[RMDB]
RNA sequence: GGGAACGACUCGAGUAGAGUCGAAAAUAGCAGGACAUAGCCGUUAGGCGCGAAGCGGUGUAGCGUCACUUUGAUGGCGGUACUAUGAAUUGAUGCAAGGUGUGGAGCGACCUUAAACAGUUCUGGUUUGACGGCUUUCAGUUCGCUGAAAGCCGAAACAUUCUUAUCCCUUCGGGGAUAAGAAUGUAAAAGAAACAACAACAACAAC
Reactivity to DMS in 0.01 (KOAc 150mM, MgCl2 10mM, bicine 150mM(pH8.5), 24C), signal-to-noise 2, nucleotides 027 to 156: u000a060g030c020a060g030g020a170c070a120u000a110g020c070c010g030u000u010a100g020g010c020g010c080g000a090a220g000c030g010g010u010g040u010a180g020c030g030u010c010a050c090u000u000u000g030a110u000g010g030c040g020g000u000a070c050u000a050u000g000a080a140u010u000g020a130u020g000c080a100a060g000g000u010g060u000g030g010a080g000c020g010a100c030c020u000u000a020a090a070c080a110g020u020u000c030u010g070g010u000u000u000g020a170c020g010g020c010u010u000u010c010a000g000u000u000c290g000c020u000g000a000a000a010g010c020c000g000a000a020
Reactivity to 2A3 in 0.01 (KOAc 150mM, MgCl2 10mM, bicine 150mM(pH8.5), 24C), signal-to-noise 8, nucleotides 027 to 156: u130a010g010c020a010g000g030a010c010a030u030a010g020c000c010g030u040u060a050g000g000c010g000c010g050a060a020g060c090g060g030u120g020u050a030g030c000g020u020c020a050c140u240u190u250g170a220u200g040g000c010g010g020u040a050c010u020a030u080g040a060a050u080u070g040a030u060g030c040a020a010g000g000u020g020u090g030g000a010g000c000g010a010c000c000u060u130a100a020a000c010a030g000u010u000c010u030g070g000u030u060u120g070a040c000g000g010c000u000u000u000c000a010g010u020u120c170g010c090u000g000a000a000a000g000c000c000g000a000a000
An RNA of 207 nucleotides, treated with DMS and 2A3 and read out base by base. The DMS profile rests on 3,394 reads. For 2A3, 9,432 sequencing reads were counted. For DMS the reverse transcriptase was MarathonRT. It was measured as part of the RMDB library M2RFPK.